[RMDB]
RNA sequence: GGGAACGACUCGAGUAGAGUCGAAAACUAUCCAUGUAACAGAGAUGUAUUAUUAACAAUACUCAUCGCCUAGUGGAGCUUUGUGUGGCCAAGUUGUCCCAAGAUUGGUUUCCACUUCUAGAACUUCUCGCCAUGGCCUUAAAUCCUCACUGCAAGAAUACGCCUAUGAGUUCGCUCAUAGGCGUAUAAAAGAAACAACAACAACAAC
Reactivity to DMS in 0.01 (KOAc 150mM, MgCl2 10mM, bicine 150mM(pH8.5), 24C), signal-to-noise 2, nucleotides 027 to 156: c080u000a060u000c000c020a090u000g010u000a140a170c080a090g030a120g010a090u000g000u010a070u000u000a120u020u030a120a180c130a060a060u000a060c040u000c050a060u000c010g060c090c060u010a130g050u000g000g020a060g020c090u010u000u000g020u000g020u000g000g040c050c020a040a220g030u000u000g010u000c040c000c010a090a150g000a150u010u000g000g010u000u000u000c030c020a190c040u000u000c020u010a100g000a030a110c030u010u000c030u000c040g040c010c030a070u010g030g010c000c030u010u010a030a070a040u000c020c010u010c090a120c060u010g020c030a040a160g010a160
Reactivity to 2A3 in 0.01 (KOAc 150mM, MgCl2 10mM, bicine 150mM(pH8.5), 24C), signal-to-noise 2, nucleotides 027 to 156: c030u020a020u080c010c010a030u080g050u120a040a100c070a050g050a000g010a020u080g030u050a030u040u020a040u040u150a200a080c090a050a020u060a030c030u040c040a110u050c020g060c020c010u000a010g020u010g030g010a020g000c020u060u110u100g090u030g010u040g070g000c010c010a100a050g030u090u130g020u030c030c020c040a040a000g110a110u080u060g020g010u040u040u040c000c020a070c000u110u020c060u070a030g030a120a060c040u000u040c040u060c030g040c040c040a020u020g050g010c010c020u030u070a030a140a050u010c020c000u100c040a070c040u100g030c030a060a000g000a100

Chemical mapping of a 207-nucleotide RNA with DMS and 2A3. For 2A3, 888 sequencing reads were counted. DMS adducts were read by reverse transcription with MarathonRT. The DMS profile rests on 2,388 reads. It was measured as part of the RMDB library OK3TST.